[RMDB]
Description
An RNA of 207 nucleotides, treated with 2A3 and DMS and read out base by base. The RNA was probed in 150 mM KOAc, 10 mM MgCl2 and 150 mM bicine (pH 8.5) at 24 C. DMS adducts were read by reverse transcription with MarathonRT. For 2A3 the reverse transcriptase was SuperScript II with manganese.
RNA sequence: GGGAACGACUCGAGUAGAGUCGAAAAGCUAUUAUAAGCACUUUACAUAUAUUAACGCAUUUAAUCCUCACAACAACCAUUUUUUAGGUAGGAAAACUGAGGUAAUAAAACAUUAAGUAACUUGCCUGAAGUUGCACAUGUACUAAAUGCCAGGGCACGAUACUACUCCAUUCGUGGAGUAGUAUCGAAAAGAAACAACAACAACAAC
Reactivity to 2A3 in 0.01 (KOAc 150mM, MgCl2 10mM, bicine 150mM(pH8.5), 24C), signal-to-noise 4, nucleotides 027 to 156: g000c010u040a020u210u110a150u220a190a040g030c030a040c030u130u230u240a050c060a060u230a040u090a070u190u170a200a040c090g030c050a030u020u050u170a090a090u090c000c000u030c000a030c010a000a130c010a020a070c030c020a090u090u060u010u100u240u210a100g010g030u030a010g030g080a130a090a020a020c060u040g000a000g010g030u030a080a070u080a060a090a010a010c030a020u090u090a120a030g010u000a000a010c010u030u070g020c010c000u020g020a030a010g010u010u010g010c020a020c010a020u020g030u060a100c020u160a030a030a020u020g000c020c030a050g020g010g000c030a010
Reactivity to DMS in 0.01 (KOAc 150mM, MgCl2 10mM, bicine 150mM(pH8.5), 24C), signal-to-noise 1, nucleotides 027 to 156: g000c000u000a020u000u010a130u000a050a060g000c000a080c100u000u020u000a060c030a130u000a080u000a040u000u010a040a090c040g000c020a070u000u000u000a110a080u010c000c020u000c050a090c000a090a120c060a160a110c020c030a050u010u000u000u010u010u010a040g000g020u000a040g000g020a070a080a110a100c090u020g010a010g000g080u000a160a090u000a040a080a010a110c050a060u000u000a120a080g000u010a020a090c020u000u000g000c030c040u000g020a190a030g030u000u000g020c010a040c100a020u000g040u000a030c180u000a030a140a040u000g010c000c010a080g030g000g050c040a120